[RMDB]
RNA sequence: GGGAACGACUCGAGUAGAGUCGAAAAACACUGCUGCUACGGCAGCAGUGAACUUGGGAAGAGGAAGAAAGAGAGGCUCCAAGAGUAGUAGGACUGGGAACAUAUGAGAAAGCAUGAGCUCUAUCCAUCUAUCCAUCCCCUCCCAUUCGCUAGAAUGUUGCAGGUGGAGAUUUCGCUCUUAUGUUUUCUCGAUGCCUCCCAUUCCUAUCGUUCUUGGAACUUCCUUCCUCUUCCUUUUUUUUACGGUGCCAUUACGAUGGCACCGAAGCACCUGAUUCGUCAGGUGCAAAAGAAACAACAACAACAAC
Reactivity to DMS in 0.01 (KOAc 150mM, MgCl2 10mM, bicine 150mM(pH8.5), 24C), signal-to-noise 2, nucleotides 027 to 266: a160c000a000c000u000g010c010u010g000c000u010a140c270g060g040c010a010g000c030a000g040u000g000a050a030c130u010u020g020g000g010a010a000g020a030g000g000a020a020g010a180a100a120g020a260g000a030g010g000c080u010c000c010a000a030g020a020g030u010a070g040u010a020g000g020a010c100u020g000g000g010a130a300c020a020u010a050u010g030a040g000a010a050a020g010c000a020u020g000a000g010c000u020c210u030a130u000c030c030a020u000c020u010a110u020c160c140a180u020c050c010c020c010u030c030c080c010a020u000u000c030g020c300u060a060g010a020a030u010g010u010u010g010c220a030g000g000u000g010g010a020g000a120u010u000u020c150g010c030u010c000u000u020a030u000g010u000u000u000u000c000u000c010g000a010u010g000c170c060u000c000c000c000a030u000u000c010c000u000a000u000c110g010u010u000c020u010u000g000g000a000a010c010u000u000c000c020u000u000c000c020u000c000u010u000c000c000u000u000u030u090u000u000u000u000a000c000g000g000u000g000c060c020a020u000u020a150c170g010a010u000g000g000c000a000c000c000g000a010a080